Chemical mapping of a 177-nucleotide RNA with DMS and 2A3. Reactivities are given for positions 27 through 126. DMS adducts were read by reverse transcription with MarathonRT. The reactions ran in a buffer of 150 mM KOAc, 10 mM MgCl2 and 150 mM bicine (pH 8.5), at 24 C.
RNA sequence: GGGAACGACUCGAGUAGAGUCGAAAAAAUAUGCUCGACAGGCUGCCUGUCCGACAGAGGUUUUAGAUCUUCUGAUCUUUCCCUGCAGCAUAUCGCUUAUGCAUCAAGCGAUUGUCGGAUCACACAACCACCUCAACGGAUUCGUCCGUUGAGGUGGAAAAGAAACAACAACAACAAC
Reactivity to DMS in 0.01 (KOAc 150mM, MgCl2 10mM, bicine 150mM(pH8.5), 24C), signal-to-noise 1, nucleotides 027 to 126: a060a050u000a030u000g000c040u010c090g020a160c090a030g000g000c170u010g020c040c050u000g020u000c030c020g000a010c010a040g000a190g010g000u000u010u000u000a020g000a000u010c000u010u000c250u010g000a010u000c000u000u000u000c010c000c000u000g020c160a150g000c050a010u000a050u000c000g010c020u010u000a030u010g020c300a080u000c190a030a000g010c030g000a030u000u000g000u000c000g010g020a110u020c090a050c100a060c210a100a100
Reactivity to 2A3 in 0.01 (KOAc 150mM, MgCl2 10mM, bicine 150mM(pH8.5), 24C), signal-to-noise 1, nucleotides 027 to 126: a070a000u140a070u070g020c070u020c050g070a030c020a050g090g020c040u080g050c010c040u010g010u020c000c050g010a000c000a020g060a030g020g050u100u090u050u060a010g000a000u010c010u240u030c130u280g010a010u010c000u000u000u030c000c000c000u010g000c070a040g000c030a050u000a000u120c000g000c030u000u050a100u220g140c070a130u110c080a080a010g010c000g010a010u000u000g040u000c030g050g000a040u060c010a010c000a000c020a100a110